Structure probing data (DMS and 2A3) for a 177-nucleotide construct. It was measured as part of the RMDB library M2PK90.
[RMDB]
RNA sequence: GGGAACGACUCGAGUAGAGUCGAAAACAUCAGGAGGACCUUCCGCGCACUUCCAAGCAGGAGCUUUCCUUGCAAGCGCACUUCCAAUCUACUCGAGAGGAGGAGGAGGAGGAGGAUUCCCACAAAAACAGUAAAGCACAUUCGUGUGCUUUACUGUAAAAGAAACAACAACAACAAC
Reactivity to DMS in 0.01 (KOAc 150mM, MgCl2 10mM, bicine 150mM(pH8.5), 24C), signal-to-noise 3, nucleotides 027 to 126: c120a070u020c140a090g030g020a070g030g020a160c150c080u000u000c070c060g030c050g040c020a070c110u000u000c080c160a140a170g020c030a070g010g010a020g010c180u020u000u000c040c000u000u000g040c020a060a050g000c050g000c030a130c020u010u010c030c010a170a180u010c020u000a050c040u000c020g010a050g000a270g030g000a150g000g000a130g010g000a080g000g000a100g000g000a190g020g010a160u000u000c000c000c000a090c210a040a070a070a050
Reactivity to 2A3 in 0.01 (KOAc 150mM, MgCl2 10mM, bicine 150mM(pH8.5), 24C), signal-to-noise 2, nucleotides 027 to 126: c040a100u190c070a050g050g020a020g010g010a070c010c020u090u000c070c040g000c000g000c000a070c050u180u070c070c050a070a050g000c030a000g000g050a020g080c120u140u220u090c010c010u010u120g000c010a060a110g040c010g010c030a030c020u040u000c020c000a040a100u040c010u050a060c010u010c040g050a040g000a020g030g040a040g020g040a030g040g040a040g010g010a050g020g010a020g010g010a030u040u000c000c060c010a030c030a010a040a050a020
Annotation:
Reactivities are rounded to 0.1 and cut off at 0 and 3.